Background:
Structure probing data (DMS and 2A3) for a 177-nucleotide construct. Reactivities are given for positions 27 through 126. The data come from the RNA Mapping Database (RMDB), library RFMREP. The 2A3 profile rests on 2,013 reads. Conditions: 150 mM KOAc, 10 mM MgCl2 and 150 mM bicine (pH 8.5), 24 C. DMS adducts were read by reverse transcription with MarathonRT.

RNA sequence: GGGAACGACUCGAGUAGAGUCGAAAAGGAAAUCCCGACCGGCGGUAGUAAAGCACAUUUGCUUUAGAGCCCGUGACCCGUGUGCAUAAGCACGCGGUGGAUUCAGUUUAAGCUGAAGCCGACAGUGCAAAUAGGCAUGGUUCGCCAUGCCUAUUUGAAAAGAAACAACAACAACAAC
Reactivity to DMS in 0.01 (KOAc 150mM, MgCl2 10mM, bicine 150mM(pH8.5), 24C), signal-to-noise 2, nucleotides 027 to 126: g000g010a110a130a130u000c010c010c000g030a100c160c040g010g000c010g000g000u000a020g040u000a000a000a010g010c010a080c300a150u020u000u000g010c000u010u000u000a020g000a030g010c020c000c000g000u000g010a260c190c000c010g010u000g000u010g010c010a160u010a130a100g010c000a010c000g010c010g000g000u000g000g000a030u010u000c010a000g000u000u010u010a030a300g000c000u010g000a020a010g010c020c000g000a080c160a090g000u010g000
Reactivity to 2A3 in 0.01 (KOAc 150mM, MgCl2 10mM, bicine 150mM(pH8.5), 24C), signal-to-noise 1, nucleotides 027 to 126: g020g000a130a020a050u030c000c030c000g020a040c020c000g000g000c010g000g000u000a000g020u000a000a000a020g030c000a040c050a300u240u240u220g000c000u010u020u000a010g030a000g010c040c010c000g020u000g030a030c030c000c000g000u000g000u020g000c040a100u050a300a120g000c000a000c000g020c000g000g010u030g000g000a000u000u000c000a000g000u010u130u150a000a000g000c010u000g000a000a010g010c000c000g000a010c050a020g090u100g060